[RMDB]
RNA sequence: GGGAACGACUCGAGUAGAGUCGAAAACGAGCGCGGCGACGAGCGCGUGCCCCAUCUCGGCGAACUGCAGCAGAUGCUGUGGCUCGCAGUCGACGUUCGCGCCGAGAUCGAGCAUCAUCGUGUAGCAGUCACCGUCAGUCUUCGGACUGACGGUGACAAAAGAAACAACAACAACAAC
Reactivity to DMS in 0.01 (KOAc 150mM, MgCl2 10mM, bicine 150mM(pH8.5), 24C), signal-to-noise 1, nucleotides 027 to 126: c060g000a080g010c010g000c000g030g000c020g000a100c000g020a060g000c000g020c000g010u000g010c010c020c010c060a020u000c050u000c050g040g060c010g040a040a080c090u000g010c010a040g030c040a180g040a040u010g000c130u000g000u000g000g010c010u000c010g020c010a040g010u030c030g020a130c040g040u000u000c040g000c020g010c010c000g000a090g000a070u000c100g020a100g000c050a150u020c100a070u000c040g000u000g000u010a050g010c110a100
Reactivity to 2A3 in 0.01 (KOAc 150mM, MgCl2 10mM, bicine 150mM(pH8.5), 24C), signal-to-noise 2, nucleotides 027 to 126: c030g000a040g050c020g000c000g080g020c020g040a170c000g000a090g160c000g030c010g010u030g030c000c010c000c010a030u020c010u030c020g140g000c030g050a180a090c040u200g000c000a030g000c030a010g000a300u290g030c050u020g030u110g040g000c000u000c010g000c000a020g110u040c010g020a080c010g030u070u300c030g000c000g000c020c000g010a040g010a070u040c020g010a010g000c010a060u040c010a030u030c040g070u050g030u100a040g070c030a030